[RMDB]
The record gives the reactivity of an RNA of 207 nucleotides to DMS and 2A3. The DMS profile rests on 2,737 reads. DMS adducts were read by reverse transcription with MarathonRT. For 2A3, 555 sequencing reads were counted. Source: RMDB library OK3TST, as collected in RNAgym.

RNA sequence: GGGAACGACUCGAGUAGAGUCGAAAAUCGAGGACGUCACCGAAUGCCAGUCGCGGACGAGGAAGCUCUACAUCGAGAUAGGAACCUACGGUGGGCCUGGGUUCGGAGGCCUUGUGUUAUCCUGCUCUUCCGGUGCUAGCCCGGUCGUCGUCGGCAAUAAAGGACUCGUAUUCGUACGAGUCCUUUAAAAAGAAACAACAACAACAAC
Reactivity to DMS in 0.01 (KOAc 150mM, MgCl2 10mM, bicine 150mM(pH8.5), 24C), signal-to-noise 1, nucleotides 027 to 156: u010c040g000a080g030g000a020c010g020u010c000a170c020c000g010a080a100u000g000c070c010a110g000u000c080g010c050g040g010a070c060g010a110g020g040a110a080g040c080u040c040u000a020c010a050u010c000g050a090g020a060u010a150g000g040a070a060c040c030u000a010c090g020g020u000g030g010g010c090c050u000g000g030g020u000u000c040g010g000a160g030g020c050c020u000u000g040u000g010u000u000a080u010c000c020u000g020c060u000c070u010u000c010c030g000g000u000g010c060u010a080g020c000c060c000g080g000u010c020g030u010c000g040u000c020g000g000c030a100a170
Reactivity to 2A3 in 0.01 (KOAc 150mM, MgCl2 10mM, bicine 150mM(pH8.5), 24C), signal-to-noise 1, nucleotides 027 to 156: u110c010g000a000g000g000a000c010g020u060c110a050c170c010g060a060a020u180g120c020c000a040g080u100c010g030c020g100g020a060c020g020a030g040g140a050a110g010c050u090c080u150a060c020a200u140c210g000a000g000a010u110a020g040g010a040a030c030c030u060a020c060g120g020u050g060g040g000c000c120u090g040g060g020u090u120c080g000g020a000g010g030c010c000u020u030g020u000g050u090u010a100u100c000c000u050g020c030u000c000u020u090c000c000g140g060u180g020c070u070a020g060c050c040c000g000g000u000c000g010u000c010g020u010c020g020g040c020a020a020